[RMDB]
RNA sequence: GGGAACGACUCGAGUAGAGUCGAAAAAUGGUAGUUAGUCUACUCGCUAUCCUAGUUACUUUUGAGUAAUCUAAAGUGUGUGUAAACGGGCGAAAGUCUGUAAAAUACUGGGGACAUAGGGUCAACAAGAACUAGUAGACCUUCGGGUCUACUAGAAACCCUAGUGAAUGUUCGCAUUCACUAGGGUAAAAGAAACAACAACAACAAC
Reactivity to 2A3 in 0.01 (KOAc 150mM, MgCl2 10mM, bicine 150mM(pH8.5), 24C), signal-to-noise 1, nucleotides 027 to 156: a010u030g000g000u040a030g030u080u070a030g050u030c030u050a030c010u010c040g010c010u030a070u060c010c000u080a050g020u050u080a040c040u010u050u080u080g090a030g020u090a040a130u030c070u040a000a030a030g000u010g010u030g010u000g060u080a030a170a140c040g000g050g010c010g050a070a010a010g030u000c050u030g030u070a110a000a000a000u060a070c040u000g000g000g000g050a010c020a060u140a020g030g020g070u070c000a020a010c020a000a100g050a070a020c000u010a000g000u000a000g000a000c000c000u050u010c080g020g000g000u000c000u000a000c000u000a000g000a020a020
Reactivity to DMS in 0.01 (KOAc 150mM, MgCl2 10mM, bicine 150mM(pH8.5), 24C), signal-to-noise 1, nucleotides 027 to 156: a120u000g020g020u000a020g020u000u010a180g020u000c010u000a100c020u000c060g040c080u000a080u000c020c030u000a100g020u010u020a000c070u010u010u010u000g020a060g010u000a050a070u000c020u000a010a040a060g060u010g040u000g030u010g020u020a040a180a050c050g050g040g040c000g070a090a090a190g000u000c000u000g040u000a020a080a080a120u000a050c010u000g020g000g020g010a080c070a070u010a110g000g030g000u000c050a100a050c040a070a040g020a110a130c020u000a020g040u000a000g000a010c000c030u020u000c300g050g000g020u010c020u000a000c000u000a000g000a020a050
Source: RMDB library M2RFPK, as collected in RNAgym.
Chemical mapping of a 207-nucleotide RNA with 2A3 and DMS.
The reactions ran in a buffer of 150 mM KOAc, 10 mM MgCl2 and 150 mM bicine (pH 8.5), at 24 C.
The DMS profile rests on 1,936 reads.
Values cover nucleotides 27 to 156.